Annotation:
An RNA of 177 nucleotides, treated with DMS and read out base by base. It was measured as part of the RMDB library TTRINS. For DMS, 1,973 sequencing reads were counted.

RNA sequence: GGGAACGACUCGAGUAGAGUCGAAAAGAUAUGGAACGGAUGCGUGCUGGAGCUAUGCUAAUACUAUACGUCGGAAACGACGUGAUAGGAUAACAUAGCGUUGAAAGCACGCAUCCGUUCCUAAGUCCAUCGAAAAAAACUUCGGUUUUUUUCGAUGAAAAGAAACAACAACAACAAC
Reactivity to DMS in 0.01 (KOAc 150mM, MgCl2 10mM, bicine 150mM(pH8.5), 24C), signal-to-noise 2, nucleotides 027 to 126: g010a100u010a300u000g000g010a030a000c000g020g000a000u000g010c020g050u000g000c000u020g010g000a080g010c000u000a000u010g010c030u000a180a040u000a160c000u000a000u000a000c000g000u010c000g000g000a150a100a300c000g000a010c010g010u010g010a000u000a000g020g000a170u000a060a060c000a000u000a010g030c010g030u000u020g010a120a150a030g010c010a000c000g010c010a000u010c000c000g000u000u000c010c000u000a010a110g010u010c050